The record gives the reactivity of an RNA of 177 nucleotides to 2A3 and DMS. For 2A3 the reverse transcriptase was SuperScript II with manganese.

RNA sequence: GGGAACGACUCGAGUAGAGUCGAAAACACAACAACAACAAACACGCCGCGAUAGACUAUGCAAAGCUGUACCAAAAGCCUAAGCACAAGGCAAAAGUGCAGUCGCGAGCGAACAGCAUAGUGUGCACAUGACCUAGCUCUUCGGAGCUAGGUCAUGAAAAGAAACAACAACAACAAC
Reactivity to 2A3 in 0.01 (KOAc 150mM, MgCl2 10mM, bicine 150mM(pH8.5), 24C), signal-to-noise 2, nucleotides 027 to 126: c100a000c030a020a140c020a070a010c040a010a060c020a100a200a010c050a000c020g020c020c000g010c010g000a000u050a130g150a030c050u070a030u190g100c070a090a000a000g020c000u000g000u000a020c020c010a020a050a100a000g000c020c000u000a050a000g010c000a000c030a020a000g000g000c000a000a070a000a000g020u020g020c000a010g010u070c030g000c000g050a020g070c000g060a030a000c020a000g100c030a030u080a080g090u020g040u010g000c000a010
Reactivity to DMS in 0.01 (KOAc 150mM, MgCl2 10mM, bicine 150mM(pH8.5), 24C), signal-to-noise 1, nucleotides 027 to 126: c050a190c270a110a120c090a030a070c250a050a010c260a150a110a160c220a120c030g000c070c000g000c000g050a070u000a050g010a040c150u040a020u120g000c130a110a060a090g000c000u000g000u000a000c040c030a010a110a100a000g000c000c000u000a010a090g000c000a000c060a000a090g000g000c000a040a200a010a040g020u000g010c070a000g000u010c010g000c000g000a050g060c000g000a140a030c060a120g000c170a040u000a050g000u000g000u000g130c090a300
Overview
The 2A3 profile rests on 1,332 reads. Conditions: 150 mM KOAc, 10 mM MgCl2 and 150 mM bicine (pH 8.5), 24 C. Source: RMDB library OK1LIB, as collected in RNAgym.